[RMDB]
This 177-nucleotide RNA was probed chemically with 2A3 and DMS.
For DMS the reverse transcriptase was MarathonRT.
2A3 is a SHAPE reagent: it acylates the 2'-hydroxyl of flexible nucleotides of all four kinds.
It was measured as part of the RMDB library TTRINS.
For DMS, 3,214 sequencing reads were counted.
RNA sequence: GGGAACGACUCGAGUAGAGUCGAAAAGAUAUGGAGUGCGCCACCUACCCACCGAAUGUGUGGAGGUUGAUCGGAAACGAUCAACUACCCACCCACAUGCAUUCGAGGGUGGCGCACUCCUAAGUCACGAUAAGGAAUCGUUCGCGAUUCCUUAUCGAAAAGAAACAACAACAACAAC
Reactivity to 2A3 in 0.01 (KOAc 150mM, MgCl2 10mM, bicine 150mM(pH8.5), 24C), signal-to-noise 1, nucleotides 027 to 126: g050a010u130a090u230g010g010a020g010u000g000c000g060c000c000a000c000c000u110a150c070c060c110a110c140c020g020a000a040u030g070u000g010u020g020g000a010g000g040u020u000g000a000u000c000g020g020a080a030a000c030g000a000u010c000a000a000c000u060a070c090c090c000a040c020c000c030a060c010a070u300g010c000a030u020u000c030g020a220g000g000g000u000g000g000c010g000c000a010c000u010c000c000u000a000a010g010u020c000a000
Reactivity to DMS in 0.01 (KOAc 150mM, MgCl2 10mM, bicine 150mM(pH8.5), 24C), signal-to-noise 4, nucleotides 027 to 126: g030a060u010a300u010g010g000a060g010u000g020c020g000c010c010a010c020c010u000a120c130c160c120a300c160c000g000a020a010u000g010u000g020u010g000g000a100g010g000u000u000g010a000u000c000g000g000a060a040a090c000g000a010u020c010a000a020c000u000a060c070c050c080a300c030c040c010a050c040a080u010g010c000a020u000u000c000g000a130g020g000g030u000g010g000c000g000c000a000c000u000c000c000u000a000a030g010u000c070a290